[RMDB]
RNA sequence: GGGAACGACUCGAGUAGAGUCGAAAAAGAACUUUGCUUUACGGGGGCAUUUUCGGUUACCCCUCAGAUGCCAAGAACAAGAAGGGAAAGCUCCGUCUUCUCUACGAGGCAGCGCCAAUGAGCUUCCAUCUCCAUUAGGGUUCGCCCUAAUGGAGAUAAAAGAAACAACAACAACAAC
Reactivity to DMS in 0.01 (KOAc 150mM, MgCl2 10mM, bicine 150mM(pH8.5), 24C), signal-to-noise 4, nucleotides 027 to 126: a110g000a070a090c050u000u000u010g020c010u000u010u000a100c160g000g010g010g010g010c090a040u010u000u000u000c150g020g020u000u010a150c100c040c010c040u010c110a070g010a070u010g010c020c030a050a120g010a080a110c260a060a070g000a070a030g000g000g010a070a060a070g010c050u000c040c100g000u000c050u000u000c010u000c030u000a120c100g000a140g000g010c030a060g010c130g010c070c070a050a080u010g010a040g010c040u010u010c030c040
Reactivity to 2A3 in 0.01 (KOAc 150mM, MgCl2 10mM, bicine 150mM(pH8.5), 24C), signal-to-noise 1, nucleotides 027 to 126: a000g050a030a020c010u050u040u060g020c010u090u040u070a080c050g030g020g010g010g020c000a030u030u050u120u190c010g010g000u040u100a090c000c000c020c000u000c010a060g000a030u030g020c000c020a000a010g030a040a000c040a040a010g150a030a040g010g040g000a100a150a030g030c030u020c040c030g010u010c020u040u040c010u000c020u070a050c050g030a040g020g000c020a050g050c040g020c010c000a070a130u150g020a010g000c000u030u010c050c000